Source information: An RNA of 177 nucleotides, treated with 2A3 and DMS and read out base by base. The reactions ran in a buffer of 150 mM KOAc, 10 mM MgCl2 and 150 mM bicine (pH 8.5), at 24 C. Reactivities are given for positions 27 through 126.
[RMDB]
RNA sequence: GGGAACGACUCGAGUAGAGUCGAAAAAGUUGACCAUGACAGCGAGUGUGGCCAAGGUGACAGCUGCACGCCCGGAGCCAAGCGCGGCGUGGGCUGAAGCCCGGCGGCGGGUACGCCAACGCCGCGAGAUGAUCCGUUGUUUCGACAACGGAUCAUCAAAAGAAACAACAACAACAAC
Reactivity to 2A3 in 0.01 (KOAc 150mM, MgCl2 10mM, bicine 150mM(pH8.5), 24C), signal-to-noise 2, nucleotides 027 to 126: a000g060u060u070g020a090c020c000a040u100g080a030c030a020g030c030g060a050g030u140g020u060g070g000c040c010a070a030g050g010u020g050a020c030a000g000c020u080g010c040a020c050g000c020c000c010g020g050a000g030c060c020a100a020g020c000g040c020g010g000c000g010u040g000g000g000c010u010g040a040a010g000c000c000c000g040g030c070g050g120c000g030g000g030u040a020c050g000c000c000a000a000c000g000c000c000g000c000g020a010
Reactivity to DMS in 0.01 (KOAc 150mM, MgCl2 10mM, bicine 150mM(pH8.5), 24C), signal-to-noise 2, nucleotides 027 to 126: a070g020u020u020g000a140c010c080a080u000g000a150c080a060g000c080g010a060g010u010g000u030g000g030c070c040a110a090g000g010u040g000a090c060a080g010c010u000g000c060a100c110g040c020c000c020g020g010a040g010c040c060a090a120g000c000g040c020g000g000c000g020u000g000g010g000c020u050g010a050a170g010c000c000c010g000g000c210g000g000c060g010g000g000u010a110c100g000c000c010a050a010c020g000c000c000g000c010g020a020

For 2A3, 1,533 sequencing reads were counted.
The data come from the RNA Mapping Database (RMDB), library RFM100.